[RMDB]
RNA sequence: GGGAACGACUCGAGUAGAGUCGAAAAGAUAUGGAGCUACGGACGCUUUACAGGCACAUGAGGGCUUCGGAAACGAAGCCUACCCACCAUGUGCCUGUAAAGAACUACGUCAGUAGCUCCUAAGUCACUAAAAGACCAACUUCGGUUGGUCUUUUAGAAAAGAAACAACAACAACAAC
Reactivity to DMS in 0.01 (KOAc 150mM, MgCl2 10mM, bicine 150mM(pH8.5), 24C), signal-to-noise 2, nucleotides 027 to 126: g000a050u000a300u010g000g030a010g030c000u000a010c010g010g010a020c010g000c000u010u000u000a000c000a020g000g000c000a000c000a010u000g010a250g060g000g050c000u010u000c000g020g000a120a180a200c010g010a020a010g010c010c000u000a010c050c100c110a300c080c000a000u000g020u010g020c020c000u000g000u000a000a020a000g010a050a080c140u020a300c030g020u000c010a030g000u000a000g020c020u000c000c000u000a000a050g020u000c000a290
Structure probing data (DMS) for a 177-nucleotide construct. For DMS the reverse transcriptase was MarathonRT. Values cover nucleotides 27 to 126. The RNA was probed in 150 mM KOAc, 10 mM MgCl2 and 150 mM bicine (pH 8.5) at 24 C.